[RMDB]
An RNA of 177 nucleotides, treated with DMS and 2A3 and read out base by base. Conditions: 150 mM KOAc, 10 mM MgCl2 and 150 mM bicine (pH 8.5), 24 C. For DMS, 12,564 sequencing reads were counted. Source: RMDB library OK1LIB, as collected in RNAgym.

RNA sequence: GGGAACGACUCGAGUAGAGUCGAAAAGACGGAUGUCGAUCCGGAAAGACAUCUGGAGCACUGUCGUUGCGACGAGAGUACGAUCCAAUCCGGAUUGCAUUUGCUCUCUUUGUGCUCUUGCACGAAAGGGUCAUCCGUGCUUCGGCAUGGGUGACCCAAAAGAAACAACAACAACAAC
Reactivity to DMS in 0.01 (KOAc 150mM, MgCl2 10mM, bicine 150mM(pH8.5), 24C), signal-to-noise 5, nucleotides 027 to 126: g000a080c020g000g000a010u000g000u020c020g020a030u000c010c000g000g000a060a070a200g010a080c240a070u010c110u010g000g000a060g000c070a030c010u000g000u010c010g010u010u010g020c100g040a040c040g000a010g000a020g030u020a080c130g000a100u010c030c040a070a200u010c030c030g010g000a030u010u000g000c150a030u000u000u000g000c060u000c020u000c010u020u000u010g000u000g000c000u030c130u050u010g020c010a010c010g000a060a040a130
Reactivity to 2A3 in 0.01 (KOAc 150mM, MgCl2 10mM, bicine 150mM(pH8.5), 24C), signal-to-noise 9, nucleotides 027 to 126: g030a000c020g020g020a010u020g080u300c050g000a010u000c000c000g010g060a090a120a020g150a030c080a120u080c110u100g020g010a020g040c030a010c040u070g040u170c010g030u040u110g070c210g080a020c010g000a010g000a010g040u040a030c090g040a090u000c020c000a000a040u010c020c010g000g000a010u010u010g000c020a040u010u020u060g020c010u010c010u000c000u060u050u100g020u010g000c020u080c090u270u280g020c020a010c020g050a070a060a050